The record gives the reactivity of an RNA of 177 nucleotides to DMS and 2A3. 2A3 adducts were read by reverse transcription with SuperScript II with manganese. The reactions ran in a buffer of 150 mM KOAc, 10 mM MgCl2 and 150 mM bicine (pH 8.5), at 24 C. Source: RMDB library TTRDEL, as collected in RNAgym. Values are in units of 0.01, from 0 to 300, in steps of 10. The DMS profile rests on 11,477 reads.
[RMDB]
RNA sequence: GGGAACGACUCGAGUAGAGUCGAAAAGAUAUGGAUCCCAGACAUGCUAUCCCGUCGGAAACGACGGAUAGCAACAGCUGGAGUCCUAAGUCAAAGGCAUCAGUGUUGUUCGCAACACUGAUGCCAAGAAUAUCAACUAGUUCGCUAGUUGAUAUUCAAAAGAAACAACAACAACAAC
Reactivity to DMS in 0.01 (KOAc 150mM, MgCl2 10mM, bicine 150mM(pH8.5), 24C), signal-to-noise 6, nucleotides 027 to 126: g000a040u000a300u000g000g000a010u000c010c000c000a000g000a050c080a150u000g010c000u000a000u000c110c040c090g020u000c000g000g000a090a070a170c000g000a000c000g000g000a000u000a000g000c000a020a030c290a130g000c000u010g000g000a060g000u010c000c000u000a050a130g010u000c040a080a100a160g000g010c010a010u000c000a000g000u000g010u000u000g010u010u010c230g010c010a000a000c000a000c000u000g010a000u000g010c000c010a000a010
Reactivity to 2A3 in 0.01 (KOAc 150mM, MgCl2 10mM, bicine 150mM(pH8.5), 24C), signal-to-noise 5, nucleotides 027 to 126: g020a010u060a040u140g010g000a020u040c000c010c010a000g010a030c040a080u130g000c000u000a020u110c120c110c100g000u000c000g020g020a080a040a030c010g000a000c010g000g000a000u010a000g000c000a000a000c020a000g010c000u000g000g000a020g020u000c000c010u030a090a030g050u030c060a070a070a160g010g000c000a000u000c000a010g000u000g010u010u020g040u040u140c300g010c160a010a000c000a000c000u000g000a000u000g010c000c000a000a000